[RMDB]
RNA sequence: GGGAACGACUCGAGUAGAGUCGAAAAGGGAAUUAAAGAUCCUAAGGCCUUAAUUUUGAGCCAUAAUCUGCUUUCAGAAUGUCCAGUAGGAACUAAGGUAAGUUUUCAUCAUGAUAAUCAUGAUGAAACCAAUACGAUGCUUCGGCAUCGUAUUGGUAAAAGAAACAACAACAACAAC
Reactivity to 2A3 in 0.01 (KOAc 150mM, MgCl2 10mM, bicine 150mM(pH8.5), 24C), signal-to-noise 4, nucleotides 027 to 126: g070g000g010a030a010u160u100a240a090a050g060a080u050c010c010u050a040a110g050g030c000c010u110u140a130a180u050u150u090u110g060a040g010c000c020a020u100a070a130u040c050u040g030c010u100u100u240c030a040g000a110a150u130g060u080c020c030a060g050u070a100g080g050a040a020c020u010a070a020g050g020u060a080a100g020u020u000u000u090c000a010u000c000a000u000g040a040u220a180a110u270c000a000u010g000a000u000g000a010a000
Reactivity to DMS in 0.01 (KOAc 150mM, MgCl2 10mM, bicine 150mM(pH8.5), 24C), signal-to-noise 4, nucleotides 027 to 126: g000g000g000a050a070u010u030a060a090a080g000a050u000c020c020u000a060a100g000g000c020c000u000u020a090a050u010u000u030u000g010a100g000c070c110a070u030a070a090u020c110u000g010c100u010u010u040c050a030g000a020a050u000g000u010c050c050a130g020u030a120g000g000a030a050c040u000a050a080g020g000u050a050a100g010u000u000u000u000c000a000u000c000a020u010g000a200u050a110a150u030c010a000u010g000a000u000g000a020a020
Source: RMDB library OK1LIB, as collected in RNAgym. Structure probing data (2A3 and DMS) for a 177-nucleotide construct. High DMS reactivity at an A or C suggests that its Watson-Crick edge is free. The 2A3 profile rests on 2,711 reads. 2A3 adducts were read by reverse transcription with SuperScript II with manganese. The RNA was probed in 150 mM KOAc, 10 mM MgCl2 and 150 mM bicine (pH 8.5) at 24 C.